Conditions: 150 mM KOAc, 10 mM MgCl2 and 150 mM bicine (pH 8.5), 24 C. An RNA of 177 nucleotides, treated with DMS and 2A3 and read out base by base.

[RMDB]
RNA sequence: GGGAACGACUCGAGUAGAGUCGAAAAUGAGAUCACACCACUACACUCCAGCCUGGGCAAUAGAGUGAGACUCUGUCUCAAAAAAAAAGUAUAUGUAAGCUGGGUGUGGUGGCAUGCACCUGUAGUCAAGGACUAUUGGAUUCGUCCAAUAGUCCUUAAAAGAAACAACAACAACAAC
Reactivity to DMS in 0.01 (KOAc 150mM, MgCl2 10mM, bicine 150mM(pH8.5), 24C), signal-to-noise 4, nucleotides 027 to 126: u010g020a100g020a120u010c060a070c120a130c000c000a030c010u010a020c080a010c010u010c010c020a020g000c020c060u010g010g000g020c050a060a040u010a040g000a150g010u000g000a040g010a070c010u010c160u020g010u000c010u000c000a000a000a000a000a050a090a080a070a100g010u000a040u000a040u010g010u000a100a130g000c040u000g000g000g030u010g010u000g010g010u000g000g000c030a030u000g000c100a100c020c000u000g020u000a070g010u010c130
Reactivity to 2A3 in 0.01 (KOAc 150mM, MgCl2 10mM, bicine 150mM(pH8.5), 24C), signal-to-noise 2, nucleotides 027 to 126: u080g000a040g000a060u120c030a020c030a020c160c000a010c010u010a000c010a000c020u050c000c010a000g000c010c060u170g040g170g000c010a010a050u040a110g160a030g100u090g030a000g000a010c020u030c110u300g040u010c000u040c000a100a050a020a000a030a000a000a010a050g100u080a150u000a020u080g030u030a040a010g000c010u000g010g010g010u000g010u000g000g020u010g030g030c010a000u020g000c000a030c070c030u050g150u180a060g110u070c030
Reactivities are given for positions 27 through 126.
The 2A3 profile rests on 1,564 reads.